[RMDB]
RNA sequence: GGGAACGACUCGAGUAGAGUCGAAAAGGACGGGCUGUCGCGUCCGAAUUAACGACAGCAACUAGCCUGUCACCAACCAGGCGAAUUAUGUUGGUGUAAUGAGGCGAAAGCCUCUAUCAGACUGGGACAUAGCAGUCGAAUUAUCUAUGUCAUUAGAAGUAAUAUUAGGUUUCGACCUAAUAUUACUAAAAGAAACAACAACAACAAC
Reactivity to 2A3 in 0.01 (KOAc 150mM, MgCl2 10mM, bicine 150mM(pH8.5), 24C), signal-to-noise 3, nucleotides 027 to 156: g000g010a000c010g010g030g000c000u000g010u000c000g020c010g010u000c010c020g010a020a060u220u070a110a060c000g000a000c000a000g010c010a020a050c020u020a030g030c000c000u010g030u050c010a000c000c000a000a000c000c000a000g000g020c090g040a030a070u220u170a080u180g010u000u000g040g000u000g000u020a080a100u130g000a000g000g000c020g050a030a020a010g000c010c000u000c000u010a050u070c020a000g010a000c000u010g000g060g000a000c000a010u000a000g000c000a000g010u020c070g020a050a060u150u060a040u110c000u000a000u000g000u000c000a010u020u060a070g110a140
Reactivity to DMS in 0.01 (KOAc 150mM, MgCl2 10mM, bicine 150mM(pH8.5), 24C), signal-to-noise 2, nucleotides 027 to 156: g030g010a050c040g040g030g020c010u010g000u000c010g040c030g030u000c130c030g010a090a070u000u010a130a090c020g010a050c010a020g030c000a080a080c040u010a230g030c000c000u020g010u010c060a250c080c020a070a060c090c020a050g000g000c030g010a080a050u000u030a080u000g040u000u000g040g030u000g010u010a030a090u000g000a000g020g010c000g020a160a090a290g000c070c000u000c020u010a020u000c090a160g020a090c020u000g000g000g000a040c020a050u000a010g020c030a100g040u000c060g010a110a070u000u000a060u010c010u000a010u000g000u010c010a250u010u000a090g000a190